[RMDB]
RNA sequence: GGGAACGACUCGAGUAGAGUCGAAAAAUGCACAAUACAGUGUUUAUGCGGUUACCCACCGCGUAGAGCAUAGAACGCUCAAACAACAAAGGAGAAAAACAAAUGAAAAGGCACCGUUCGCGGUGCCGACUAUGGACACGUUCGCGUGUCCAUAGUCAAAAGAAACAACAACAACAAC
Reactivity to 2A3 in 0.01 (KOAc 150mM, MgCl2 10mM, bicine 150mM(pH8.5), 24C), signal-to-noise 4, nucleotides 027 to 126: a000u130g010c040a030c020a040a160u300a240c060a080g010u010g000u010u100u050a040u030g000c000g040g040u040u140a090c000c000c000a000c020c010g000c010g000u020a020g010a000g000c020a030u030a120g080a080a010c050g000c010u010c000a060a040a010c060a040a010c050a060a090a030g130g050a120g160a070a100a030a030a010c080a010a120a060u140g080a070a110a040a040g000g010c010a000c010c000g040u050u050c120g030c000g100g000u000g010c000c000
Reactivity to DMS in 0.01 (KOAc 150mM, MgCl2 10mM, bicine 150mM(pH8.5), 24C), signal-to-noise 2, nucleotides 027 to 126: a100u000g000c030a030c030a150a190u010a130c160a120g010u030g030u000u010u000a000u000g030c010g030g040u010u010a150c000c000c000a300c000c000g000c000g050u000a280g000a040g000c000a090u000a060g010a100a170c120g000c010u010c000a100a090a070c140a020a030c100a020a050a100g000g000a150g000a030a050a120a090a040c120a100a010a030u000g010a040a100a050a040g000g010c000a000c000c000g010u000u010c200g000c020g020g020u000g000c000c000

The record gives the reactivity of an RNA of 177 nucleotides to 2A3 and DMS. Values cover nucleotides 27 to 126. It was measured as part of the RMDB library RFMREP. 2A3 adducts were read by reverse transcription with SuperScript II with manganese.